[RMDB]
RNA sequence: GGGAACGACUCGAGUAGAGUCGAAAAGAACGGCAGAGAGCCGAGAAAUGAGACGAGGUAGAGAGCGCGCUCUACCAAAAGCUGUGUGUAAAAACGCACGUGUAGGCGCGGCUACACAACUCAAGAAGGCCGCGUAAUAUUUCGAUAUUACGCGGCCAAAAGAAACAACAACAACAAC
Reactivity to DMS in 0.01 (KOAc 150mM, MgCl2 10mM, bicine 150mM(pH8.5), 24C), signal-to-noise 1, nucleotides 027 to 126: g020a150a070c000g010g000c000a120g000a110g020a180g010c020c000g000a300g000a120a030a070u000g000a160g010a050c300g020a200g000g030u000a060g010a080g000a100g050c000g000c000g000c000u150c000u000a000c000c070a040a200a090a070g000c300u000g070u000g020u000g020u040a000a060a050a120a070c040g000c000a000c110g020u000g040u000a000g000g030c040g070c030g020g010c000u030a020c000a000c050a140a130c070u000c040a000a050g000a280a100
Reactivity to 2A3 in 0.01 (KOAc 150mM, MgCl2 10mM, bicine 150mM(pH8.5), 24C), signal-to-noise 1, nucleotides 027 to 126: g000a030a000c000g000g010c030a010g070a000g060a020g300c000c000g000a000g000a000a140a020u030g000a000g030a010c200g030a090g030g030u070a020g000a000g000a000g100c010g000c000g020c020u050c000u130a000c000c110a030a030a030a030g260c220u100g000u000g000u000g000u050a010a000a000a000a000c000g000c000a000c050g210u270g000u060a000g000g000c020g040c000g000g000c000u010a010c000a000c000a030a020c000u020c010a000a010g000a010a010
This 177-nucleotide RNA was probed chemically with DMS and 2A3. Reactivities are given for positions 27 through 126. Reactivities are rounded to 0.1 and cut off at 0 and 3. It was measured as part of the RMDB library OK1LIB. DMS adducts were read by reverse transcription with MarathonRT.